Overview:
Chemical mapping of a 177-nucleotide RNA with 2A3. Values cover nucleotides 27 to 126. Source: RMDB library OK1LIB, as collected in RNAgym. 2A3 adducts were read by reverse transcription with SuperScript II with manganese. Conditions: 150 mM KOAc, 10 mM MgCl2 and 150 mM bicine (pH 8.5), 24 C.
[RMDB]
RNA sequence: GGGAACGACUCGAGUAGAGUCGAAAAUGGUGUUGAAAUACAUGGCGCGAAUCAUUACUUAAUUCAUCAAUUUGUAUCACCAUACUAUAAUAGAAGAAAUGAUGUAUGGGCAAAUCAAUAUAAAUUCGCUACUGUGCGUCUUCGGACGCACAGUAGCAAAAGAAACAACAACAACAAC
Reactivity to 2A3 in 0.01 (KOAc 150mM, MgCl2 10mM, bicine 150mM(pH8.5), 24C), signal-to-noise 1, nucleotides 027 to 126: u140g090g090u040g000u060u200g100a100a070a000u180a100c120a180u100g070g050c070g060c060g020a100a000u000c000a060u000u140a020c180u150u260a010a010u100u200c000a120u000c120a120a140u120u000u000g050u000a160u100c100a000c060c000a000u000a000c060u020a000u100a110a300u080a000g200a000a060g040a120a300a000u100g000a000u000g060u000a000u000g060g180g000c000a030a030a030u020c000a000a000u100a000u040a170a120a000u100u200c010